[RMDB]
RNA sequence: GGGAACGACUCGAGUAGAGUCGAAAAAGUUUGUAUAAGCACUGUUUAACGGUCCCAGUGCAUGCCAAUUGGUGUUUACAGACGAGUAUGGUAUUGACCAUAUGAUACUAUUCUCUCUCUCAGGAGAGGAGAAUAGAUAACUACAAAGGAUCGACAAUCACUCAGCAUGGUUCGCCAUGCUGAGUGAAAAAGAAACAACAACAACAAC
Reactivity to 2A3 in 0.01 (KOAc 150mM, MgCl2 10mM, bicine 150mM(pH8.5), 24C), signal-to-noise 2, nucleotides 027 to 156: a010g020u030u020u050g090u010a080u050a240a010g000c010a040c010u010g010u040u170u090a110a020c010g000g000u000c000c000c000a000g000u000g000c040a020u040g000c000c080a300a300u100u300g000g000u000g060u040u090u070a000c010a000g000a020c030g010a010g070u000a000u000g000g060u060a100u160u300g130a090c000c020a000u030a030u060g120a050u010a050c000u000a000u000u020c000u000c000u000c000u000c000u000c070a160g000g250a010g040a000g140g010a010g010a000a000u000a000g000a010u120a150a110c170u270a160c130a030a040a040g010g000a020u000c000g040a060c110a000a060

Source: RMDB library OK3TST, as collected in RNAgym. Chemical mapping of a 207-nucleotide RNA with 2A3. The RNA was probed in 150 mM KOAc, 10 mM MgCl2 and 150 mM bicine (pH 8.5) at 24 C.